The record gives the reactivity of an RNA of 177 nucleotides to 2A3 and DMS. Source: RMDB library RFM100, as collected in RNAgym. For 2A3 the reverse transcriptase was SuperScript II with manganese. For 2A3, 3,121 sequencing reads were counted.

RNA sequence: GGGAACGACUCGAGUAGAGUCGAAAAGAACUCGACCGCCUGGCCGCGCAUCUCUCCGAGUUGCGCAAGGACGCCGCGCGGCGCUGAGCCGGGGUACCCUCGACACCAAGCCGCCGCCCGCGAUUCGGUCCCAAGUGUAUUUCGAUACACUUGGGACAAAAGAAACAACAACAACAAC
Reactivity to 2A3 in 0.01 (KOAc 150mM, MgCl2 10mM, bicine 150mM(pH8.5), 24C), signal-to-noise 4, nucleotides 027 to 126: g020a060a030c020u030c030g040a040c000c000g040c030c000u050g040g000c040c050g010c030g000c000a000u020c030u000c010u050c080c160g010a010g010u000u030g020c000g000c020a030a020g050g000a040c050g000c010c010g040c010g000c020g050g000c010g020c030u080g010a000g030c050c000g000g000g000g030u190a180c050c040c000u010c010g020a030c020a030c040c040a050a000g020c030c010g030c000c000g010c010c060c000g030c010g060a100u110u100c040g040
Reactivity to DMS in 0.01 (KOAc 150mM, MgCl2 10mM, bicine 150mM(pH8.5), 24C), signal-to-noise 2, nucleotides 027 to 126: g020a060a120c040u020c000g010a080c050c030g030c010c020u000g030g030c020c070g000c000g000c010a040u000c000u010c020u030c120c150g000a040g010u000u000g000c040g100c020a110a040g000g000a070c060g040c040c040g000c190g020c010g000g030c000g010c140u030g000a120g020c070c000g000g010g020g000u000a060c020c000c020u000c070g010a040c050a110c100c080a090a030g010c030c040g010c000c000g030c010c020c110g030c080g020a010u000u000c110g000